[RMDB]
RNA sequence: GGGAACGACUCGAGUAGAGUCGAAAAACGAGGCUGCUACGGCAGCCUCGAGCGGGUGAGGCCGUGCGCCCCUGGAUCCAGGUGAGGCCACAGGCCCCUGGGUCCGGGAGAGGCCAUGCGCCCCUAACGUAAAAAGCAAGUUCGCUUGCUUUUUACGAAAAGAAACAACAACAACAAC
Reactivity to 2A3 in 0.01 (KOAc 150mM, MgCl2 10mM, bicine 150mM(pH8.5), 24C), signal-to-noise 3, nucleotides 027 to 126: a000c010g000a000g030g000c010u030g010c010u040a030c280g140g000c000a000g030c000c000u000c000g000a000g000c080g010g060g040u140g090a130g060g000c030c000g030u040g030c090g030c000c000c000c000u000g000g000a010u000c000c000a030g050g070u120g140a200g100g050c030c050a180c060a150g030g000c000c000c000c000u000g000g010g000u000c000c000g000g000g000a020g000a010g000g000c000c000a010u060g050c120g000c000c030c000c000u020a060a070
Reactivity to DMS in 0.01 (KOAc 150mM, MgCl2 10mM, bicine 150mM(pH8.5), 24C), signal-to-noise 5, nucleotides 027 to 126: a120c010g000a020g020g030c000u000g020c010u010a090c190g030g020c010a010g020c000c010u000c020g000a010g020c130g010g000g030u010g010a120g000g040c000c010g010u020g000c200g010c080c030c000c020u020g000g010a010u000c010c010a010g000g010u050g010a100g010g010c000c020a130c270a200g020g020c000c000c010c000u000g000g000g010u000c000c000g010g000g000a050g010a130g010g000c000c000a050u020g000c060g020c000c000c010c010u020a080a160